Notes: An RNA of 177 nucleotides, treated with DMS and 2A3 and read out base by base. Values cover nucleotides 27 to 126.
RNA sequence: GGGAACGACUCGAGUAGAGUCGAAAAAGCAACGAGUGUGUGUGGGACGUUUUAUCCCAAGCUCUGAGUAGAGCACGCGCUCACACACACCGCGAGCGAGCAUCAGCAGAGCCCAAACGCUGGUAAAACUACUUAAUAGAUUCGUCUAUUAAGUAGUAAAAGAAACAACAACAACAAC
Reactivity to DMS in 0.01 (KOAc 150mM, MgCl2 10mM, bicine 150mM(pH8.5), 24C), signal-to-noise 9, nucleotides 027 to 126: a100g010c010a190a040c020g000a300g010u000g010u000g010u000g020u000g000g000g010a070c010g010u000u010u010u010a130u010c050c050c050a100a120g010c000u000c000u000g010a190g020u010a060g010a010g020c010a070c070g010c070g010c010u000c000a000c010a010c010a010c010a010c010c000g010c020g010a160g000c020g010a170g010c140a020u000c010a020g010c010a110g000a110g000c010c010c010a080a080a140c160g000c010u000g010g010u000a060a060a110
Reactivity to 2A3 in 0.01 (KOAc 150mM, MgCl2 10mM, bicine 150mM(pH8.5), 24C), signal-to-noise 3, nucleotides 027 to 126: a000g060c050a050a050c010g010a080g050u010g000u000g010u000g000u010g010g000g030a040c010g010u010u060u160u200a180u140c030c040c020a010a010g000c000u000c010u080g300a270g170u300a020g180a000g000c010a010c030g040c010g000c000u000c000a000c000a000c000a000c000a000c000c000g070c020g010a020g010c010g010a020g030c020a030u030c000a000g000c010a020g020a070g100c000c000c000a030a060a000c060g000c010u010g030g000u030a080a070a010

Background: The 2A3 profile rests on 29,080 reads. The DMS profile rests on 26,441 reads.